Source information:
Structure probing data (DMS and 2A3) for a 177-nucleotide construct.
RNA sequence: GGGAACGACUCGAGUAGAGUCGAAAAGAUAUGGAGCGUGCAGUCAUCGAUCUUCUCUAUACGAGGUAAAUAUCGGAAACGAUAUUUAAAUAUGUAUAGAGAAGGGAGACUGCCCGCUCCUAAGUCAGCAUUACUAUAGGUUCGCCUAUAGUAAUGCAAAAGAAACAACAACAACAAC
Reactivity to DMS in 0.01 (KOAc 150mM, MgCl2 10mM, bicine 150mM(pH8.5), 24C), signal-to-noise 3, nucleotides 027 to 126: g000a040u000a300u010g000g000a000g010c000g020u010g000c000a000g000u000c010a300u000c260g000a060u010c000u000u000c000u000c000u010a000u000a000c000g010a130g000g020u000a010a010a010u000a000u000c000g020g000a110a060a180c010g000a020u000a000u000u000u000a010a040a070u000a160u010g000u000a020u000a000g010a020g010a000a010g000g000g010a020g010a000c000u000g000c000c040c000g000c010u000c000c000u000a010a070g000u000c030a200
Reactivity to 2A3 in 0.01 (KOAc 150mM, MgCl2 10mM, bicine 150mM(pH8.5), 24C), signal-to-noise 4, nucleotides 027 to 126: g050a020u070a050u180g000g000a010g010c000g000u020g000c000a010g010u020c020a240u300c140g090a090u020c020u010u000c000u000c000u000a010u000a030c120g270a050g120g070u040a000a000a030u020a010u000c010g000g040a060a090a040c010g010a000u000a020u020u000u050a020a020a010u300a220u300g000u000a000u000a020g010a000g010a010a000g000g000g000a020g000a000c000u000g000c000c000c010g010c000u000c000c010u000a000a000g020u030c030a020
Overview:
2A3 adducts were read by reverse transcription with SuperScript II with manganese.